[RMDB]
RNA sequence: GGGAACGACUCGAGUAGAGUCGAAAAGACGUCGCCGAACGCGCCGUGAAGACGUUCGUCCAGAACCUCGCACUGUUCCUCGUCGCAGGCGUGUCCGUCCUGUCCGUCGCCUGGGGCACCGCGCUGCAAUCCGCGGCCCUCGCCACCCUGGCGACGGGAUAAAGCCCGUAUUCGUACGGGCUUUAUCAAAAGAAACAACAACAACAAC
Reactivity to 2A3 in 0.01 (KOAc 150mM, MgCl2 10mM, bicine 150mM(pH8.5), 24C), signal-to-noise 2, nucleotides 027 to 156: g010a000c010g020u110c020g050c030c010g080a150a090c060g000c010g000c070c010g020u040g020a040a010g040a030c040g030u020u020c060g040u140c100c030a060g030a040a060c000c040u050c080g040c030a080c130u100g050u180u070c030c000u020c020g070u020c000g010c060a040g000g010c000g030u020g040u040c000c000g050u020c020c010u020g060u040c010c010g000u000c000g010c000c010u020g010g000g010g000c020a010c010c030g000c010g020c070u250g040c100a080a080u060c060c030g000c010g000g000c060c000c020u060c070g010c020c030a220c030c000c000u000g020g010c010g000a000c000g020g000
Reactivity to DMS in 0.01 (KOAc 150mM, MgCl2 10mM, bicine 150mM(pH8.5), 24C), signal-to-noise 1, nucleotides 027 to 156: g000a080c010g010u000c030g030c020c030g040a010a060c070g010c050g020c040c050g060u030g000a140a090g030a110c020g020u000u010c000g000u000c070c020a170g010a060a100c050c060u010c050g010c060a090c120u010g000u010u010c000c000u000c070g030u000c060g000c110a090g000g030c030g020u000g000u010c060c020g000u010c000c000u000g000u010c000c060g010u010c010g000c000c000u000g010g010g020g000c030a060c020c020g000c040g020c090u000g030c110a160a120u000c080c020g000c020g020g040c030c020c010u000c100g030c090c060a140c000c030c040u010g000g010c000g020a050c000g000g010